[RMDB]
RNA sequence: GGGAACGACUCGAGUAGAGUCGAAAAUGAGUCUGUGGAUCCCCGCCUGCUGACGGACACCCUCGAACUGACCGCCACGGCUGACAUGCCUGAUGAAGUGCGCGCAAAGCUGCAUAAAAUCACCGGUCUGUUUCUGCGUGACGGUGGUGAUGCCGCCGAACUUACAUGGGUUCGCCCAUGUAAGUUCAAAAGAAACAACAACAACAAC
Reactivity to DMS in 0.01 (KOAc 150mM, MgCl2 10mM, bicine 150mM(pH8.5), 24C), signal-to-noise 1, nucleotides 027 to 156: u000g000a070g020u000c040u010g000u000g020g000a120u000c030c050c000c040g010c040c040u040g020c110u010g030a090c060g010g000a190c020a120c030c050c000u010c080g020a030a090c030u000g030a090c010c030g040c030c030a080c050g010g000c030u000g020a100c040a070u020g020c030c050u000g010a050u000g000a120a250g030u000g000c030g000c000g000c060a130a130a290g000c040u010g010c000a090u010a020a050a140a030u000c000a070c010c020g050g020u000c060u020g020u000u000u000c010u000g000c030g020u010g010a030c040g010g020u000g030g020u000g010a120u000g000c020c000g030c050c020
Reactivity to 2A3 in 0.01 (KOAc 150mM, MgCl2 10mM, bicine 150mM(pH8.5), 24C), signal-to-noise 3, nucleotides 027 to 156: u160g020a020g060u030c060u050g030u070g050g050a100u060c010c050c010c020g000c010c020u070g040c060u080g010a040c040g030g010a020c020a060c010c010c000u050c030g050a050a030c020u060g070a010c020c010g050c050c070a040c030g010g090c040u050g040a030c020a050u160g000c010c030u010g010a040u030g030a110a040g020u030g030c030g000c000g010c100a200a080a070g020c040u190g000c070a010u160a100a270a010a010u030c020a020c040c030g010g010u020c010u010g010u000u110u040c080u090g000c040g020u050g020a050c030g010g000u050g000g020u020g040a050u100g110c020c020g060c010c020
Conditions: 150 mM KOAc, 10 mM MgCl2 and 150 mM bicine (pH 8.5), 24 C. Structure probing data (DMS and 2A3) for a 207-nucleotide construct. The 2A3 profile rests on 2,452 reads. 2A3 adducts were read by reverse transcription with SuperScript II with manganese.